This 177-nucleotide RNA was probed chemically with 2A3. It was measured as part of the RMDB library OK1LIB.

RNA sequence: GGGAACGACUCGAGUAGAGUCGAAAAUACUCGGACAAUACGCGGUCUGACUGACAGAUCCAAACCAAGCCGAAUCGAGUUGAUCUUCUGAAUUCUGCGGGUGCGGGUCCGUUGGCCUUCAGCGAUCGCACUGGGCGACUUUCGAGUCGCCCAGUGCAAAAGAAACAACAACAACAAC
Reactivity to 2A3 in 0.01 (KOAc 150mM, MgCl2 10mM, bicine 150mM(pH8.5), 24C), signal-to-noise 1, nucleotides 027 to 126: u140a000c010u020c030g030g050a040c060a060a050u300a140c010g000c010g050g000u010c000u010g020a210c000u000g000a040c000a040g000a020u000c000c000a030a030a030c000c000a170a040g120c010c060g000a000a000u040c020g050a050g090u090u090g160a210u100c050u170u010c040u100g060a100a030u020u010c010u040g010c000g030g010g000u030g010c020g000g000g000u000c000c010g000u010u010g090g000c000c020u050u070c020a020g000c000g010a000u100c010